[RMDB]
RNA sequence: GGGAACGACUCGAGUAGAGUCGAAAAAGGUGUGUCCGUGUGGCAUCGGAGAGUGAUGCUCCGGGAGUAAAGGGUGAGGGUGUUGAUCGCCAGUGGAUCUGGACCCAAGUUCUUCCACAGUCAACAAUCAACUCAACGUGUUCGCGCGUUGGGUUGAAAAAGAAACAACAACAACAAC
Reactivity to DMS in 0.01 (KOAc 150mM, MgCl2 10mM, bicine 150mM(pH8.5), 24C), signal-to-noise 9, nucleotides 027 to 126: a050g010g010u000g010u010g000u000c010c040g020u020g030u040g010g020c050a050u010c000g000g010a100g010a120g010u040g000a060u020g000c000u000c020c020g010g000g010a120g010u030a080a080a050g000g000g010u000g000a300g000g000g020u000g010u000u000g010a040u010c060g010c060c060a080g010u030g010g000a040u010c030u010g000g010a090c010c050c030a030a200g000u000u010c030u000u000c020c010a040c050a000g010u010c060a060a000c210a080a120
Reactivity to 2A3 in 0.01 (KOAc 150mM, MgCl2 10mM, bicine 150mM(pH8.5), 24C), signal-to-noise 6, nucleotides 027 to 126: a000g080g010u030g000u010g020u000c010c010g020u030g030u070g040g000c000a020u010c030g030g010a080g010a010g070u200g030a020u060g010c010u000c000c000g010g010g000a060g030u120a010a070a020g030g010g020u040g040a050g010g030g010u080g100u060u030g020a020u040c020g070c050c060a070g040u140g150g030a050u010c020u040g010g030a020c000c010c000a010a030g010u030u010c000u030u000c020c000a030c010a000g070u050c010a010a000c010a000a070
Background: Chemical mapping of a 177-nucleotide RNA with DMS and 2A3. 2A3 adducts were read by reverse transcription with SuperScript II with manganese. Reactivities are given for positions 27 through 126. For DMS the reverse transcriptase was MarathonRT. The reactions ran in a buffer of 150 mM KOAc, 10 mM MgCl2 and 150 mM bicine (pH 8.5), at 24 C.